[RMDB]
RNA sequence: GGGAACGACUCGAGUAGAGUCGAAAAGAUAUGGAUGCCGGUAAUACGGAGAACUACAGGACUUCGGAAACGAACUCCUGCUCCGUGCCAGGCAUCCUAAGUCAAAAGUAACACUUCGGUGUUACAACUCAUCGUAAAUCUUCGGAUUUACGAUGAGAAAAGAAACAACAACAACAAC
Reactivity to 2A3 in 0.01 (KOAc 150mM, MgCl2 10mM, bicine 150mM(pH8.5), 24C), signal-to-noise 2, nucleotides 027 to 126: g000a020u100a030u150g000g010a010u010g000c010c010g040g040u140a270a150u120a190c010g050g060a010g010a030a050c270u300a040c150a010g000g000a010c020u000u010c010g030g020a060a070a040c020g010a000a000c010u000c000c000u020g000c000u010c000c010g000u000g000c000c020a020g000g000c000a000u000c000c010u000a000a000g030u000c030a030a050a100a030g000u000a000a030c010a000c040u080u140c300g140g000u010g000u010u000a000c000a010a050
Reactivity to DMS in 0.01 (KOAc 150mM, MgCl2 10mM, bicine 150mM(pH8.5), 24C), signal-to-noise 3, nucleotides 027 to 126: g010a030u010a300u000g000g000a000u000g010c010c030g010g010u000a100a110u000a190c000g000g010a030g000a050a020c080u010a300c010a000g000g000a010c110u000u000c000g030g000a140a090a210c000g020a000a010c220u000c000c010u000g000c000u000c000c000g010u000g010c030c010a100g010g010c010a000u000c000c000u000a010a100g010u000c010a060a080a090a110g000u000a010a010c000a000c000u000u000c190g010g020u010g000u000u010a000c010a120a130